[RMDB]
RNA sequence: GGGAACGACUCGAGUAGAGUCGAAAAGAUAUGGAGGUAGGGCGAUAAGGUACGGUCGGAAACGACCGAAUACCUUUUGACGCCUUUCCUCCUAAGUCAAACCACUUGCCGUUCGCGGCAAGUGGAACGCUUAAUACAUCUUCGGAUGUAUUAAGCGAAAAGAAACAACAACAACAAC
Reactivity to 2A3 in 0.01 (KOAc 150mM, MgCl2 10mM, bicine 150mM(pH8.5), 24C), signal-to-noise 2, nucleotides 027 to 126: g000a000u010a010u050g010g000a000g000g010u030a010g020g010g000c020g090a210u100a300a030g000g000u010a010c010g000g000u000c000g000g010a000a020a010c010g000a000c020c000g010a010a010u030a000c000c000u010u030u060u180g090a010c000g000c000c000u010u000u010c000c010u000c010c000u000a010a000g010u000c020a050a050a120c000c000a000c020u000u000g000c000c030g060u090u110c300g020c000g150g000c000a000a010g000u010g010g000a010a010
Reactivity to DMS in 0.01 (KOAc 150mM, MgCl2 10mM, bicine 150mM(pH8.5), 24C), signal-to-noise 3, nucleotides 027 to 126: g010a030u000a100u010g000g000a010g020g000u000a000g010g000g020c000g010a140u010a030a010g000g010u000a060c020g000g010u000c000g010g000a030a050a080c010g000a010c000c000g010a050a060u000a010c000c000u000u000u000u000g010a240c020g010c010c000u010u000u000c000c000u000c000c020u000a000a040g000u000c030a110a120a260c020c000a000c000u000u000g010c000c000g020u000u000c240g030c010g000g010c000a000a000g010u000g010g010a010a010
An RNA of 177 nucleotides, treated with 2A3 and DMS and read out base by base. Conditions: 150 mM KOAc, 10 mM MgCl2 and 150 mM bicine (pH 8.5), 24 C. 2A3 adducts were read by reverse transcription with SuperScript II with manganese. DMS adducts were read by reverse transcription with MarathonRT.